Conditions: 150 mM KOAc, 10 mM MgCl2 and 150 mM bicine (pH 8.5), 24 C. This 177-nucleotide RNA was probed chemically with DMS and 2A3. The DMS profile rests on 8,167 reads. The 2A3 profile rests on 5,828 reads. Values are in units of 0.01, from 0 to 300, in steps of 10. 2A3 adducts were read by reverse transcription with SuperScript II with manganese.

RNA sequence: GGGAACGACUCGAGUAGAGUCGAAAACACGUAUUGGCUGAUCGUAACCUAGUAAGGUGUAUCCGUUAACUUGGAGAAGCUCAUUCACAUGUUGCAUGAGCUUGUCAUGCCUAGAUAGCUCAAGUAAACCAUACAGGAGGUUCGCCUCCUGUAUGGUAAAAGAAACAACAACAACAAC
Reactivity to DMS in 0.01 (KOAc 150mM, MgCl2 10mM, bicine 150mM(pH8.5), 24C), signal-to-noise 6, nucleotides 027 to 126: c100a090c110g010u010a070u010u000g010g010c030u000g000a100u010c160g010u010a100a100c050c010u010a090g000u000a070a070g010g020u000g010u000a100u010c030c040g010u000u000a060a070c070u000u010g000g010a050g000a020a030g000c000u000c010a020u000u000c020a020c040a190u010g020u000u000g010c080a010u000g000a010g010c010u000u010g000u000c020a090u010g010c020c030u010a110g000a080u000a090g000c040u010c050a030a060g000u010a080a110
Reactivity to 2A3 in 0.01 (KOAc 150mM, MgCl2 10mM, bicine 150mM(pH8.5), 24C), signal-to-noise 4, nucleotides 027 to 126: c040a000c050g080u110a130u070u130g030g010c010u030g030a070u080c050g080u120a030a060c030c010u030a070g100u110a110a090g040g010u070g060u080a070u000c010c000g040u040u100a080a060c050u020u080g060g000a050g020a020a000g000c000u010c000a010u010u040c000a010c050a170u300g060u210u020g130c000a000u000g000a000g000c000u000u000g000u000c020a010u130g030c010c000u040a060g030a130u110a050g030c000u000c090a040a040g070u090a140a150